[RMDB]
RNA sequence: GGGAACGACUCGAGUAGAGUCGAAAAGUUCGUGAGAUCACGUUCUCGAGUACGAGAACGAGUUCACUCGUGUACGAGUGAACACUCGAUCACUCACACGUGUACGAGUGAACUCUCGAGAGAGAGAGAGAUCGAGUACUCGUACGAGAUCGAUCGAACUACUAUCAGCAUUCGUGCUGAUAGUAGUAAAAGAAACAACAACAACAAC
Reactivity to DMS in 0.01 (KOAc 150mM, MgCl2 10mM, bicine 150mM(pH8.5), 24C), signal-to-noise 4, nucleotides 027 to 156: g000u010u000c020g000u000g010a300g000a010u000c010a090c000g020u010u010c040u000c000g020a150g010u000a040c030g000a220g010a040a100c050g010a040g030u000u010c000a010c000u020c000g040u010g010u000a040c050g020a080g040u010g010a030a080c050a070c120u000c050g010a170u010c100a130c080u020c010a070c030a100c050g010u000g010u000a050c020g020a120g020u010g000a060a090c020u000c000u000c030g030a270g010a260g020a120g000a140g010a190g010a130g010a180u000c010g020a300g020u000a040c010u010c010g030u000a040c040g000a060g010a030u000c000g000a150u000c010g020a060
Reactivity to 2A3 in 0.01 (KOAc 150mM, MgCl2 10mM, bicine 150mM(pH8.5), 24C), signal-to-noise 7, nucleotides 027 to 156: g050u020u020c000g010u020g020a050g000a010u010c010a000c050g020u140u090c070u020c100g010a020g010u020a020c020g010a020g020a200a060c080g010a020g010u000u000c000a000c000u000c010g020u040g020u040a040c020g010a020g010u010g010a040a010c010a060c060u130c060g120a180u080c040a030c030u000c000a020c010a020c110g020u020g010u020a010c010g010a000g000u010g010a020a010c010u000c000u000c020g120a180g000a020g000a010g000a000g010a000g010a070g010a090u030c010g010a000g000u000a010c000u010c010g030u090a000c010g000a020g000a030u010c020g000a010u020c000g000a000
Conditions: 150 mM KOAc, 10 mM MgCl2 and 150 mM bicine (pH 8.5), 24 C. An RNA of 207 nucleotides, treated with DMS and 2A3 and read out base by base. Values cover nucleotides 27 to 156. The 2A3 profile rests on 12,167 reads.